[RMDB]
Annotation
Source: RMDB library OK1LIB, as collected in RNAgym. This 177-nucleotide RNA was probed chemically with 2A3 and DMS. For DMS, 802 sequencing reads were counted. 2A3 adducts were read by reverse transcription with SuperScript II with manganese.
RNA sequence: GGGAACGACUCGAGUAGAGUCGAAAAAUACACGUUAAAAUUACUAAUUUUAUACGUACGAAUGAUCUUGAACAAAUUGAACGGACAAUUGAUGCCGCGCAAGUUAUCGCAUCAGUCAAAGAUGAGGUCCUCUUGUGGUGUUCGCACCACAAGAGGAAAAAGAAACAACAACAACAAC
Reactivity to 2A3 in 0.01 (KOAc 150mM, MgCl2 10mM, bicine 150mM(pH8.5), 24C), signal-to-noise 1, nucleotides 027 to 126: a000u120a000c030a000c300g000u040u080a000a000a000a000u000u300a180c080u170a000a010u030u040u000u000a250u000a000c000g070u000a000c080g030a020a050u070g000a070u060c070u060u090g120a050a000c120a080a240a080u200u230g000a000a000c100g020g100a000c000a000a180u120u250g120a080u100g120c000c000g180c030g000c170a060a000g120u060u120a230u280c000g000c030a000u000c000a000g150u260c170a240a180a000g030a000u000g020a000g000g130
Reactivity to DMS in 0.01 (KOAc 150mM, MgCl2 10mM, bicine 150mM(pH8.5), 24C), signal-to-noise 1, nucleotides 027 to 126: a120u090a170c040a040c030g090u020u000a010a000a010a000u000u000a030c050u040a140a060u000u000u000u000a090u040a000c000g000u000a040c140g000a030a060u000g010a110u000c010u000u020g190a130a150c230a040a060a130u000u030g000a080a040c120g050g060a000c300a140a140u030u100g000a060u000g000c000c240g000c300g000c070a000a090g000u000u000a000u110c110g000c060a110u000c000a000g000u040c170a000a030a000g000a000u000g000a010g070g000